[RMDB]
RNA sequence: GGGAACGACUCGAGUAGAGUCGAAAAGAGCAACUUAGGAUUUUAGGCUCCCCGGUGCGUCUCGAACCGCGCCGGGCCAAACCCACAGGGGCUGGCGGUCCUGUGCGGUCAAAAUCUUUCCGCUGGAAUACCUAUCCCAGUUUCGACUGGGAUAGAACAUAGUGCCAUGAUUCGUCAUGGCACUAUGAAAAGAAACAACAACAACAAC
Reactivity to 2A3 in 0.01 (KOAc 150mM, MgCl2 10mM, bicine 150mM(pH8.5), 24C), signal-to-noise 2, nucleotides 027 to 156: g010a000g010c010a010a100c070u010u030a050g150g040a080u060u050u020u060a070g030g000c010u000c000c000c000c000g000g010u000g010c010g020u020c080u100c300g080a080a040c040c010g000c000g010c000c010g000g000g000c000c000a030a010a000c000c010c000a000c000a010g020g000g010g010c020u000g030g000c000g000g020u020c010c000u000g000u010g030c250g010g000u050c070a020a010a010a040u050c030u090u140u030c010c000g000c020u010g000g070a100a080u110a160c000c000u000a000u010c020c000c000a000g010u000u070u150c200g110a020c000u000g000g000g000a000u000a000g000a000a000
Reactivity to DMS in 0.01 (KOAc 150mM, MgCl2 10mM, bicine 150mM(pH8.5), 24C), signal-to-noise 1, nucleotides 027 to 156: g000a070g020c000a020a050c040u000u010a060g020g030a060u010u000u000u000a170g010g000c010u000c000c010c000c010g040g000u000g030c000g040u000c100u000c220g010a160a130c120c020g040c000g010c020c010g000g000g000c010c010a040a080a080c000c010c000a080c060a070g000g020g000g000c000u020g000g000c020g000g000u000c000c000u010g000u000g020c120g090g010u010c050a050a010a030a050u000c010u000u000u010c000c000g040c010u020g020g000a140a150u010a050c120c000u010a000u000c000c000c000a020g050u000u010u000c300g020a060c010u000g000g000g000a000u000a000g000a110a120
Structure probing data (2A3 and DMS) for a 207-nucleotide construct. Reactivities are rounded to 0.1 and cut off at 0 and 3. For 2A3, 1,835 sequencing reads were counted. The DMS profile rests on 2,654 reads. 2A3 adducts were read by reverse transcription with SuperScript II with manganese.